[RMDB]
RNA sequence: GGGAACGACUCGAGUAGAGUCGAAAAGUUAUGCUCUCGCUGCCUAAUGGCGGUGCGGGAAACCCACUCUAAAGUCCUUAGGGUUAGCCCCUUAAGGCGGGGUUCGGAGGCACCUGGCCACAGAAGCUGAAACUGUGCACAUUCGUGUGCACAGUAAUCUGUUCCAUAUCUUCGGAUAUGGAACAGAAAAAGAAACAACAACAACAAC
Reactivity to 2A3 in 0.01 (KOAc 150mM, MgCl2 10mM, bicine 150mM(pH8.5), 24C), signal-to-noise 2, nucleotides 027 to 156: g070u110u130a110u240g030c000u070c000u010c010g010c000u020g000c000c000u220a300a170u190g000g000c010g000g050u030g000c070g030g020g000a120a050a020c010c040c000a030c010u180c080u160a160a130a300g300u030c000c000u020u020a000g000g020g000u030u050a010g040c010c000c010c010u000u020a000a000g000g050c030g000g000g000g000u000u160c060g090g000a020g020g010c000a030c000c000u030g220g030c000c000a020c000a020g000a000a000g000c040u060g010a120a040a060c000u000g000u000g000c000a010c030a020u050u090c200g140u030g000u000g000c000a000c000a000g000u000a000a020
This 207-nucleotide RNA was probed chemically with 2A3.
As a SHAPE reagent, 2A3 marks flexible, mostly unpaired nucleotides at the ribose 2'-OH.
The reactions ran in a buffer of 150 mM KOAc, 10 mM MgCl2 and 150 mM bicine (pH 8.5), at 24 C.